[RMDB]
RNA sequence: GGGAACGACUCGAGUAGAGUCGAAAAGAAUCACCGUACCUAUUUAGGUUCACGCUCCAAGAUCGGUGGAUAGCAGCCCUAUCAAUAUCUAGGAGAACUGUGCUAUGUUUAGAAGAUUAGGUAGUCUAUUACACAGCCAUGUUCGCAUGGCUGUGAAGAUAAGAUCAGGAUUCGUCCUGAUCUUAUCAAAAGAAACAACAACAACAAC
Reactivity to 2A3 in 0.01 (KOAc 150mM, MgCl2 10mM, bicine 150mM(pH8.5), 24C), signal-to-noise 1, nucleotides 027 to 156: g060a030a070u090c020a010c060c020g020u040a030c000c010u040a090u150u150u180a060g030g020u070u100c030a020c060g020c010u030c000c010a060a000g020a050u050c070g070g130u090g080g070a030u030a010g050c100a000g010c010c020c010u020a030u060c030a080a040u030a020u150c010u030a050g000g020a030g010a050a050c090u070g020u020g060c030u050a030u140g110u050u100u050a100g040a160a020g010a080u060u050a030g040g000u010a030g020u010c020u040a140u060u110a070c020a000c000a000g000c000c000a010u010g040u050u070c160g010c090a000u000g000g000c000u000g000u000g000a010a000
Reactivity to DMS in 0.01 (KOAc 150mM, MgCl2 10mM, bicine 150mM(pH8.5), 24C), signal-to-noise 4, nucleotides 027 to 156: g010a100a080u000c020a160c040c000g030u010a050c010c000u000a180u010u000u000a050g030g010u010u000c030a070c030g000c010u000c020c030a060a140g020a050u010c070g010g020u000g020g010a120u000a070g010c060a210g000c110c100c010u000a120u020c020a100a110u000a090u000c060u000a150g000g000a100g000a080a090c050u000g000u000g010c040u010a090u010g010u000u000u000a090g010a140a110g010a090u000u000a060g010g020u000a080g010u010c030u000a120u010u000a250c010a010c020a000g000c000c010a020u000g030u000u010c270g030c000a030u010g010g000c000u000g030u000g010a020a050

This 207-nucleotide RNA was probed chemically with 2A3 and DMS. The reactions ran in a buffer of 150 mM KOAc, 10 mM MgCl2 and 150 mM bicine (pH 8.5), at 24 C. For 2A3, 6,127 sequencing reads were counted.